[RMDB]
RNA sequence: GGGAACGACUCGAGUAGAGUCGAAAACGAGCCUGACGCCGACCUGUUGGUUCCGCUGAAGUCCGGCGAGGGCCGUUACGUGGCGCCGGAGAAGGUGCUUGACGAACUAGAAGGCGAAGGCCGGGUGAAAGGAAAGAUUCUUCGGAAUCUUUCCUUUAAAAGAAACAACAACAACAAC
Reactivity to DMS in 0.01 (KOAc 150mM, MgCl2 10mM, bicine 150mM(pH8.5), 24C), signal-to-noise 5, nucleotides 027 to 126: c020g000a140g030c000c000u010g020a200c050g030c010c000g000a300c030c040u000g010u000u000g000g000u000u000c140c060g020c030u000g000a160a190g010u010c110c010g010g000c010g000a220g010g010g010c010c010g000u010u000a030c200g010u000g010g000c020g020c000c010g010g000a090g000a100a230g010g020u000g000c090u010u010g020a040c030g020a040a030c010u000a110g010a070a300g000g010c000g020a300a030g000g000c000c000g000g000g020u010g000
Reactivity to 2A3 in 0.01 (KOAc 150mM, MgCl2 10mM, bicine 150mM(pH8.5), 24C), signal-to-noise 1, nucleotides 027 to 126: c010g010a040g000c010c030u040g060a090c020g000c000c000g010a050c010c020u020g060u030u120g140g000u110u050c040c000g000c000u000g040a220a020g160u030c030c010g000g000c000g010a170g030g060g070c020c000g090u120u100a020c050g070u120g020g050c030g000c020c000g090g040a120g050a120a050g080g030u000g080c040u050u140g020a020c000g010a010a010c000u020a030g020a080a020g030g000c010g000a010a020g000g000c000c000g000g000g000u090g090